[RMDB]
RNA sequence: GGGAACGACUCGAGUAGAGUCGAAAAGAAACUCCCGGAACAAGGAAAAUGGGGAUGGGAUAGGAAAAGAAGAGCGAGCCCACCGAUCCGAGUUUGCCCUGAACCUAUCAGGUUUGGAGUCCUCCGACACAUGGAUUAAGUUCGCUUAAUCCAUGUGAAAAGAAACAACAACAACAAC
Reactivity to 2A3 in 0.01 (KOAc 150mM, MgCl2 10mM, bicine 150mM(pH8.5), 24C), signal-to-noise 3, nucleotides 027 to 126: g040a040a090a020c040u030c000c000c000g020g070a040a040c050a030a070g070g020a060a040a040a160u170g050g000g000g060a040u070g060g000g000a050u100a140g110g020a110a120a060a080g090a060a020g030a010g060c030g020a030g010c010c000c000a030c020c020g030a020u030c010c010g010a040g050u020u110u120g080c010c000c010u020g000a030a030c000c000u070a110u200c070a030g010g000u040u070u070g060g000a040g020u040c000c000u030c010c010g030a020
Reactivity to DMS in 0.01 (KOAc 150mM, MgCl2 10mM, bicine 150mM(pH8.5), 24C), signal-to-noise 4, nucleotides 027 to 126: g010a120a120a130c150u000c000c000c090g010g000a090a100c100a090a100g010g000a050a060a070a060u020g000g000g000g000a050u000g000g010g000a060u010a070g000g010a060a050a110a090g010a070a060g010a080g020c040g010a090g000c000c010c030a050c080c030g000a120u000c050c050g010a080g000u000u010u010g010c060c000c020u010g000a110a090c030c020u000a050u010c140a050g010g000u000u000u000g000g010a080g010u010c080c000u000c030c070g000a210
Conditions: 150 mM KOAc, 10 mM MgCl2 and 150 mM bicine (pH 8.5), 24 C. An RNA of 177 nucleotides, treated with 2A3 and DMS and read out base by base. DMS adducts were read by reverse transcription with MarathonRT. For DMS, 2,959 sequencing reads were counted. The data come from the RNA Mapping Database (RMDB), library VIROID. Values cover nucleotides 27 to 126.